An RNA of 177 nucleotides, treated with 2A3 and DMS and read out base by base.
RNA sequence: GGGAACGACUCGAGUAGAGUCGAAAACUUAAUUUGUAUGAUUUGGUGGGCCCCUUGAUAAGUCCUUCGUAAUCCUUUCGCUCAAUCAAUGCUGGAAUGCUUAACACUAUCGCGUUGGGGCAGAUGCGACGGUUCAUAAAUUCGUUUAUGAACCGUCAAAAGAAACAACAACAACAAC
Reactivity to 2A3 in 0.01 (KOAc 150mM, MgCl2 10mM, bicine 150mM(pH8.5), 24C), signal-to-noise 3, nucleotides 027 to 126: c010u010u100a030a070u240u120u150g150u050a150u180g090a090u030u020u140g040g000u000g050g080g000c040c000c000c030u030u100g030a020u060a100a090g040u020c010c000u010u020c020g070u030a020a050u030c000c020u040u110u070c040g000c030u030c030a090a120u080c020a060a030u130g000c000u020g010g050a080a040u060g010c040u070u050a060a000c060a010c070u080a040u130c010g010c020g100u040u060g030g000g020g050c030a010g020a100u110g000c020
Reactivity to DMS in 0.01 (KOAc 150mM, MgCl2 10mM, bicine 150mM(pH8.5), 24C), signal-to-noise 4, nucleotides 027 to 126: c040u000u010a040a070u000u000u010g010u020a090u010g000a070u000u010u010g000g020u000g020g010g010c020c020c020c070u000u000g010a050u010a070a110g010u000c040c020u000u000c100g020u000a110a110u000c040c040u010u000u000c100g020c030u000c070a080a080u000c090a040a090u000g030c020u020g020g000a070a090u000g000c030u000u000a050a080c170a080c090u000a050u000c050g010c090g020u000u000g020g000g000g020c080a070g000a060u000g010c290
The DMS profile rests on 3,977 reads. Reactivities are given for positions 27 through 126. Conditions: 150 mM KOAc, 10 mM MgCl2 and 150 mM bicine (pH 8.5), 24 C.